The record gives the reactivity of an RNA of 177 nucleotides to 2A3 and DMS. The DMS profile rests on 4,960 reads. 2A3 adducts were read by reverse transcription with SuperScript II with manganese.
RNA sequence: GGGAACGACUCGAGUAGAGUCGAAAAACAGCUGACUGGCCAUCUAGUGCUGCCAUGCUGGCGUUUUAACAGUGGCACCAUGGCAUCUUGAGCUUUUUCUAGCUUUUAAAAGCCAGCUUGCUGCAGCUAAUAGCUGGCUCUUCGGAGCCAGCUAUUAAAAAGAAACAACAACAACAAC
Reactivity to 2A3 in 0.01 (KOAc 150mM, MgCl2 10mM, bicine 150mM(pH8.5), 24C), signal-to-noise 4, nucleotides 027 to 126: a010c040a020g040c050u070g140a130c000u030g040g000c030c000a040u040c040u080a030g110u050g080c010u000g000c000c010a020u040g020c010u010g050g060c060g100u050u030u000u100a080a030c040a020g020u090g130g000c030a020c040c050a080u060g040g000c000a040u040c070u060u120g020a040g020c000u090u070u010u050u040c070u110a010g010c000u060u080u030u080a010a070a020a000g000c000c000a000g000c020u020u110g010c050u060g000c010a000g010c000
Reactivity to DMS in 0.01 (KOAc 150mM, MgCl2 10mM, bicine 150mM(pH8.5), 24C), signal-to-noise 3, nucleotides 027 to 126: a110c060a060g010c020u000g000a040c020u000g000g010c030c040a080u020c090u030a100g000u020g010c020u000g040c000c010a030u010g000c070u010g010g010c010g010u030u000u000u000a040a080c190a080g010u020g000g020c030a050c090c040a060u020g010g000c040a050u020c070u020u010g010a100g000c020u000u000u030u030u020c090u010a080g010c030u000u010u020u000a010a030a090a150g000c010c000a030g000c000u000u000g000c160u020g010c030a010g020c040
It was measured as part of the RMDB library OK1LIB.